[RMDB]
RNA sequence: GGGAACGACUCGAGUAGAGUCGAAAAUCUGCCGUGAGUGGCACACGUAGGGCAAAUCGCUUGCUCUACGUGCGGAAUCGACAUCAAGAGAUUUCGGAAGCAUAAUUUUUGCACCGCAGGGCAGCUACAUGUCACCAUCCUUCGGGAUGGUGACAUGAAAAGAAACAACAACAACAAC
Reactivity to DMS in 0.01 (KOAc 150mM, MgCl2 10mM, bicine 150mM(pH8.5), 24C), signal-to-noise 1, nucleotides 027 to 126: u000c010u000g000c010c000g010u000g000a050g020u000g000g000c060a060c010a030c000g000u000a000g000g000g030c000a000a020a170u000c300g010c250u000u000g000c010u020c000u000a000c000g000u000g000c000g010g000a000a000u010c020g000a150c070a180u010c300a060a030g000a300g000a000u000u000u000c000g010g010a010a000g000c180a110u040a120a060u000u000u000u000u000g000c000a060c060c000g050c040a040g000g000g010c000a020g000c300u000a050
Reactivity to 2A3 in 0.01 (KOAc 150mM, MgCl2 10mM, bicine 150mM(pH8.5), 24C), signal-to-noise 1, nucleotides 027 to 126: u020c010u010g000c000c000g170u010g050a090g020u230g060g030c010a010c000a010c010g000u010a000g000g060g030c000a010a020a090u300c190g050c260u010u000g000c000u000c000u000a000c000g000u000g020c010g010g030a000a010u000c010g150a080c060a120u260c060a040a000g070a000g000a050u000u000u000c000g000g030a060a010g000c030a110u090a240a170u220u050u000u020u050g000c010a030c000c010g020c010a000g030g020g020c000a010g000c000u020a030

Chemical mapping of a 177-nucleotide RNA with DMS and 2A3. For DMS, 676 sequencing reads were counted. DMS adducts were read by reverse transcription with MarathonRT. Values cover nucleotides 27 to 126. For 2A3, 1,014 sequencing reads were counted.